RNA sequence: GGGAACGACUCGAGUAGAGUCGAAAAUCUGUGAGUGCGUCUGUGCUUAAGGAAGGGCAAUUAACCAUCUGGCUGCUUGUCCCCUGGAGAAAUUGACAGAACAUCAAACAGAAUAAACUCAUACCUUGAAAACUGCCAAGUGGCACAUGACUGUCCAUAUAAAAUGCGUGUUCGCACGCAUUUUAUAAAAAGAAACAACAACAACAAC
Reactivity to 2A3 in 0.01 (KOAc 150mM, MgCl2 10mM, bicine 150mM(pH8.5), 24C), signal-to-noise 3, nucleotides 027 to 156: u030c020u020g020u020g040a050g060u030g020c120g030u040c010u040g050u030g050c010u100u040a040a010g010g020a020a150g020g020g000c020a040a050u120u100a110a020c020c010a100u180c170u300g050g000c000u050g020c000u030u030g010u010c000c000c020c000u030g100g000a040g060a060a120a100u130u120g010a020c000a000g050a060a010c010a030u110c030a020a120a070c020a000g040a030a020u080a070a070a010c030u060c050a070u070a170c010c020u060u060g100a080a110a060a080c040u030g020c030c010a100a120g060u230g060g000c030a000c010a070u120g030a050c020u020g030u030c030c030a030
Reactivity to DMS in 0.01 (KOAc 150mM, MgCl2 10mM, bicine 150mM(pH8.5), 24C), signal-to-noise 1, nucleotides 027 to 156: u000c020u000g040u000g000a160g000u010g000c040g020u010c010u000g010u000g000c020u060u000a110a150g030g000a080a050g000g020g020c020a050a010u000u000a070a050c000c030a210u010c150u020g060g030c020u010g010c210u000u000g030u000c030c010c000c020u010g070g060a090g000a020a070a170u010u000g020a090c030a040g000a100a080c050a300u000c050a090a100a200c060a050g020a060a100u000a080a090a070c060u000c020a100u000a120c110c000u000u000g010a050a120a090a050c030u000g080c000c010a050a030g000u000g000g000c000a080c040a090u010g000a070c020u010g000u000c010c000a280
This 207-nucleotide RNA was probed chemically with 2A3 and DMS. The reactions ran in a buffer of 150 mM KOAc, 10 mM MgCl2 and 150 mM bicine (pH 8.5), at 24 C. For DMS the reverse transcriptase was MarathonRT.